[RMDB]
RNA sequence: GGGAACGACUCGAGUAGAGUCGAAAACGGGCUGAAAUCUAAUUACUAGUGGGCUGGCAGGAUAUCAUCUUGUAUCUACACUGCAGUUGUAGAAAAACAUUUUUUUAAUCACGUUGCGUUUGAGAAAAGGAACACUUAAAAGGAAAAUCCAUCAUCACUAAAUAGUAGGGUUCGCCCUACUAUUUAGAAAAGAAACAACAACAACAAC
Reactivity to 2A3 in 0.01 (KOAc 150mM, MgCl2 10mM, bicine 150mM(pH8.5), 24C), signal-to-noise 3, nucleotides 027 to 156: c000g010g030g000c030u050g020a000a060a090u050c040u060a080a120u170u080a130c060u040a050g010u080g020g050g030c030u020g010g000c020a030g030g010a010u030a050u150c030a010u020c020u060u110g010u020a060u040c000u010a000c010a020c020u230g080c060a070g030u110u030g010u010a010g050a040a060a030a020a010c050a060u190u080u040u000u010u020u230a050a030u140c010a020c030g010u030u020g000c020g020u020u070u150g050a060g030a000a110a010a020g050g000a060a030c020a020c100u110u120a050a090a020a010g040g000a090a130a020a050u010c020c010a010u040c010a000u040c000a020
Reactivity to DMS in 0.01 (KOAc 150mM, MgCl2 10mM, bicine 150mM(pH8.5), 24C), signal-to-noise 2, nucleotides 027 to 156: c010g020g030g050c000u010g000a050a060a080u010c090u010a120a150u000u010a120c050u000a050g050u010g020g030g050c020u000g010g050c020a060g000g000a070u000a060u010c060a090u000c080u010u000g020u000a150u000c010u000a020c030a030c060u000g020c070a100g020u010u000g010u020a090g000a030a060a110a110a120c060a020u000u000u000u000u000u000u000a050a120u000c090a070c060g010u000u000g000c020g010u000u010u000g010a100g010a070a030a080a060g010g000a080a090c000a040c130u010u000a030a050a070a100g020g000a040a050a070a130u000c020c010a100u000c030a140u010c040a210

Structure probing data (2A3 and DMS) for a 207-nucleotide construct. 2A3 adducts were read by reverse transcription with SuperScript II with manganese. The 2A3 profile rests on 1,413 reads. The data come from the RNA Mapping Database (RMDB), library OK3TST. The reactions ran in a buffer of 150 mM KOAc, 10 mM MgCl2 and 150 mM bicine (pH 8.5), at 24 C. DMS adducts were read by reverse transcription with MarathonRT.